[RMDB]
RNA sequence: GGGAACGACUCGAGUAGAGUCGAAAAGAUAUGGAUCGGCCAGCUAGCAUUCAAUCGGAAACGAUUGGCAAUGCUUGGACCUGGGCCGAUCCUAAGUCAAACUUUCGAGCGUUCGCGCUCGAAAGAAGAUACUUAGCUCGUUCGCGAGCUAAGUAUCAAAAGAAACAACAACAACAAC
Reactivity to 2A3 in 0.01 (KOAc 150mM, MgCl2 10mM, bicine 150mM(pH8.5), 24C), signal-to-noise 2, nucleotides 027 to 126: g010a000u020a020u070g000g010a000u000c000g020g000c000c000a000g010c040u040a030g000c000a010u040u020c000a030a000u000c000g000g000a010a040a030c000g010a000u010u000g050g010c160a070a020u000g010c000u040u270g060g040a050c030c020u000g040g140g080c000c000g000a010u010c000c000u000a000a000g000u020c010a090a070a180c000u010u020u010c010g020a010g010c000g020u120u120c300g030c000g040c130u000c000g010a010a000a000g000a010a000
Reactivity to DMS in 0.01 (KOAc 150mM, MgCl2 10mM, bicine 150mM(pH8.5), 24C), signal-to-noise 3, nucleotides 027 to 126: g000a020u000a180u000g010g000a020u000c020g000g020c000c000a060g020c030u000a000g010c000a010u010u020c000a010a000u010c000g030g010a070a050a120c010g010a020u000u000g000g010c300a010a010u000g010c000u010u010g040g010a020c300c020u020g010g020g010c000c020g000a000u000c000c000u000a000a060g000u000c000a150a170a300c010u000u000u000c000g010a010g020c000g010u000u000c260g020c010g020c000u000c000g010a000a000a010g010a060a080
Annotation: Source: RMDB library TTRDES, as collected in RNAgym. The record gives the reactivity of an RNA of 177 nucleotides to 2A3 and DMS. The RNA was probed in 150 mM KOAc, 10 mM MgCl2 and 150 mM bicine (pH 8.5) at 24 C. For DMS the reverse transcriptase was MarathonRT. The 2A3 profile rests on 5,517 reads. For DMS, 2,756 sequencing reads were counted.